[RMDB]
RNA sequence: GGGAACGACUCGAGUAGAGUCGAAAAGGGGGAGGUGCUAGGAUCGCGAGGGUGCCAGUGGAGCCAUGGGAUGCUCUUCCCGAUUCCGUCCAUCCCUCCCCCCGAGAGGGUCGCCCAGGAAUGGCGGGAACAACAUGAUGUUCGCAUCAUGUUGUUCAAAAGAAACAACAACAACAAC
Reactivity to DMS in 0.01 (KOAc 150mM, MgCl2 10mM, bicine 150mM(pH8.5), 24C), signal-to-noise 2, nucleotides 027 to 126: g000g000g000g010g010a030g000g010u000g030c160u020a200g020g000a050u000c050g020c300g010a080g000g010g030u000g000c060c060a070g010u000g010g000a080g000c060c050a200u010g000g000g030a180u010g000c020u010c030u000u010c040c020c020g010a110u000u000c020c040g000u010c110c060a210u010c080c000c000u000c020c000c000c000c010c010g000a040g000a090g000g000g000u000c050g000c020c010c050a110g020g000a130a060u000g010g020c010g010g010
Reactivity to 2A3 in 0.01 (KOAc 150mM, MgCl2 10mM, bicine 150mM(pH8.5), 24C), signal-to-noise 2, nucleotides 027 to 126: g020g020g010g000g000a010g020g030u080g030c080u090a080g020g010a050u060c030g000c060g070a030g020g030g020u070g110c060c040a080g020u080g080g050a070g040c080c020a120u130g080g030g050a100u110g020c000u030c000u090u090c010c020c010g000a020u120u050c010c000g050u080c020c000a060u040c000c000c000u000c000c000c010c000c000c010g040a070g030a010g010g040g030u030c020g020c000c010c020a010g050g130a180a080u120g020g030c020g030g030